[RMDB]
Conditions: 150 mM KOAc, 10 mM MgCl2 and 150 mM bicine (pH 8.5), 24 C.
Chemical mapping of a 177-nucleotide RNA with DMS and 2A3.
Values cover nucleotides 27 to 126.
For DMS, 3,899 sequencing reads were counted.
For DMS the reverse transcriptase was MarathonRT.
2A3 adducts were read by reverse transcription with SuperScript II with manganese.

RNA sequence: GGGAACGACUCGAGUAGAGUCGAAAAUUAAAGGUGGUGGUGGAGGAGGUACGCCUCCAGCUGCUCAGGCGACGUACCGCACACACGCCUUUUCGGCAUAGAGCAGCAAUAGGGUAUCCAUAAAAAACUAUAGUAACCAGUUCGCUGGUUACUAUAGAAAAGAAACAACAACAACAAC
Reactivity to DMS in 0.01 (KOAc 150mM, MgCl2 10mM, bicine 150mM(pH8.5), 24C), signal-to-noise 4, nucleotides 027 to 126: u000u010a080a090a090g000g010u000g010g020u000g000g020u000g010g010a110g020g010a120g010g010u010a020c020g000c010c000u010c020c020a090g030c010u010g020c010u000c020a120g000g010c070g020a100c040g000u000a020c020c010g020c100a120c090a090c100a080c070g000c000c000u000u010u010u000c150g020g030c060a080u000a110g000a020g000c000a010g010c030a090a070u010a080g000g010g000u000a060u010c040c020a090u020a000a040a040a070a060a120
Reactivity to 2A3 in 0.01 (KOAc 150mM, MgCl2 10mM, bicine 150mM(pH8.5), 24C), signal-to-noise 2, nucleotides 027 to 126: u070u050a070a050a020g050g020u050g000g090u020g030g030u030g000g070a120g020g030a050g010g010u030a000c030g030c010c000u000c000c010a010g030c010u000g000c000u000c050a030g080g000c020g020a060c040g060u050a050c000c030g080c020a060c010a000c010a030c080g010c010c010u040u030u060u080c040g050g000c030a050u080a050g010a000g000c010a000g020c000a010a050u080a110g020g020g000u060a040u020c030c040a070u300a040a130a010a020a020a000